RNA sequence: GGGAACGACUCGAGUAGAGUCGAAAACAUCGUGAAUGAUUCGUCAUUCACGAUGAAAAAACCUUUGUGGAUAUCGAGCGAUGAGACAGCCCAUUGGGCUGUUCGAGCUCAUAUCCACUCUGGUAAAAACUUCAUGCCUAUUCGUAGGCAUGAAGAAUAGUGUAUGUGUCUUCGGACACAUACACUAAAAAGAAACAACAACAACAAC
Reactivity to 2A3 in 0.01 (KOAc 150mM, MgCl2 10mM, bicine 150mM(pH8.5), 24C), signal-to-noise 3, nucleotides 027 to 156: c000a000u010c000g010u000g010a000a010u010g050a020u060u100c220g060u010c100a000u000u000c010a010c000g010a010u010g000a000a010a000a000a000a000c010c010u020u000u000g010u010g000g000a000u000a030u070c240g000a010g010c020g120a210u130g030a210g020a110c000a000g000c020c000c070a300u180u300g000g010g000c000u000g000u020u000c000g000a000g000c000u000c000a000u000a000u000c000c000a000c000u020c000u000g000g000u080a180a090a000a010a010c000u000u000c000a000u000g000c000c000u020a040u060u050c240g070u080a000g000g000c000a000u030g000a000a000g040a000a040
Reactivity to DMS in 0.01 (KOAc 150mM, MgCl2 10mM, bicine 150mM(pH8.5), 24C), signal-to-noise 2, nucleotides 027 to 156: c010a020u010c000g050u000g010a020a020u000g020a020u000u010c300g020u000c000a030u000u000c000a000c000g000a000u010g000a000a010a100a150a080a030c020c000u000u000u000g000u000g000g000a010u000a000u000c130g030a050g020c000g000a270u000g030a200g000a000c000a010g020c000c020c000a300u000u010g080g010g000c000u000g000u000u000c030g010a200g020c010u000c000a020u000a000u000c000c000a010c000u000c010u000g000g040u000a040a050a060a160a180c000u000u000c000a000u010g010c010c010u010a040u000u000c290g030u010a010g000g010c010a000u000g020a010a000g000a070a070